[RMDB]
RNA sequence: GGGAACGACUCGAGUAGAGUCGAAAAGUGGGCCACGUUGCGCUCGGCCACCAUUCGCGAGCCGAUCACGUCCAGCGGGUAGUGGACGCCCAGCACGAUGCGCGAGAAGCCAUAGCGGGCGCCGCGCUAAAUACGGCAGGUUCGCCUGCCGUAUUUAAAAAGAAACAACAACAACAAC
Reactivity to 2A3 in 0.01 (KOAc 150mM, MgCl2 10mM, bicine 150mM(pH8.5), 24C), signal-to-noise 7, nucleotides 027 to 126: g120u110g020g030g030c020c030a130c120g070u080u120g040c060g020c030u020c020g040g020c020c010a060c010c020a130u100u080c090g000c040g050a030g010c050c000g020a100u100c080a040c140g040u030c040c020a030g010c030g020g010g040u060a060g020u040g010g020a060c010g010c000c000c000a020g030c030a020c090g110a060u100g000c030g010c020g040a100g040a160a030g010c010c010a040u100a060g100c120g030g000g000c000g000c010c000g000c000g000c010
Reactivity to DMS in 0.01 (KOAc 150mM, MgCl2 10mM, bicine 150mM(pH8.5), 24C), signal-to-noise 7, nucleotides 027 to 126: g020u020g020g000g010c010c030a070c130g030u020u020g000c070g000c060u010c030g020g020c020c020a070c040c060a060u010u000c050g010c030g010a280g000c040c020g000a120u030c220a110c080g010u010c020c060a230g020c040g000g000g010u000a050g020u000g020g010a070c060g010c040c010c010a100g000c130a080c160g000a090u030g000c040g000c000g000a110g000a100a120g010c010c020a090u020a120g000c140g000g010g010c010g000c030c000g010c020g020c040